[RMDB]
RNA sequence: GGGAACGACUCGAGUAGAGUCGAAAAGAAAAUUAUCGCCGAUUACACCGACGACCUUCCGACCGUUGAAGCGAUGGCGAAAGAGAAGUCAGGGAAAGUUUUCCGCCUGGGUAACGCGUGGUUUAUUUCCAUCGACGAAAUUAAAACUGGCGCGGCGCUACACGUCUUGAUUCGUCAAGACGUGUAGAAAAGAAACAACAACAACAAC
Reactivity to DMS in 0.01 (KOAc 150mM, MgCl2 10mM, bicine 150mM(pH8.5), 24C), signal-to-noise 1, nucleotides 027 to 156: g000a030a000a070a060u000u010a110u000c010g090c000c030g020a070u000u000a150c080a190c100c010g010a030c010g010a220c130c030u030u000c100c010g030a170c020c010g060u010u020g020a140a200g040c040g040a070u020g050g010c000g010a050a070a050g010a100g020a110a260g050u040c020a090g000g010g010a080a090a130g000u000u010u000u000c000c040g000c000c000u010g000g000g000u000a060a050c000g000c040g030u000g020g020u010u000u000a080u060u000u010c020c040a130u000c140g010a160c060g020a020a050a040u020u010a060a060a160a000c000u000g000g000c010g000c000g040g000c100g000
Reactivity to 2A3 in 0.01 (KOAc 150mM, MgCl2 10mM, bicine 150mM(pH8.5), 24C), signal-to-noise 2, nucleotides 027 to 156: g040a000a060a010a000u220u180a100u140c030g000c050c020g040a070u090u090a060c060a060c040c010g060a030c010g020a030c030c010u070u020c030c040g180a270c030c010g040u020u070g080a140a060g100c040g100a030u060g010g000c000g000a020a030a000g080a010g010a070a010g010u090c110a150g020g040g000a050a000a090g060u000u040u090u020c020c010g040c010c040u080g050g050g030u050a070a020c000g000c010g050u000g000g030u010u040u120a030u010u100u000c050c060a130u190c110g130a140c040g020a060a000a080u110u080a040a130a080a020c020u050g070g020c020g010c000g020g000c000g040